[RMDB]
RNA sequence: GGGAACGACUCGAGUAGAGUCGAAAAAUGCCAACUGGGUGUUACGUAGUGGUACCCACGAGAAAUCAAGUAUAUGGGCUAUGGGGAUAGUACGAUCGCAAGAUUGAAACUUGAAGAAAUUGACGGACUAAUCCAAUUGGUUCGCCAAUUGGAUUAGAAAAGAAACAACAACAACAAC
Reactivity to DMS in 0.01 (KOAc 150mM, MgCl2 10mM, bicine 150mM(pH8.5), 24C), signal-to-noise 3, nucleotides 027 to 126: a080u010g010c040c030a110a220c240u000g000g000g010u010g020u000u010a060c040g020u010a100g060u010g010g010u010a040c040c010c010a050c150g010a190g000a090a090a120u010c060a060a090g010u000a080u000a070u000g000g000g030c060u000a060u000g010g020g020g000a100u000a020g010u000a100c060g000a010u000c020g020c180a050a050g000a050u000u010g000a070a070a110c010u000u000g000a020a050g000a070a070a070u000u010g020a090c110g010g020a200
Reactivity to 2A3 in 0.01 (KOAc 150mM, MgCl2 10mM, bicine 150mM(pH8.5), 24C), signal-to-noise 2, nucleotides 027 to 126: a000u110g050c000c010a040a030c070u010g020g040g010u010g020u060u040a050c120g100u130a060g030u030g060g000u040a040c000c030c010a030c040g050a060g050a070a070a010u120c040a030a030g050u030a060u020a070u210g020g010g000c010u020a050u030g060g000g000g010a000u020a030g030u050a030c090g000a010u030c030g000c040a000a040g030a060u020u100g030a160a040a010c030u040u030g030a030a040g040a070a170a060u110u090g070a030c070g030g020a010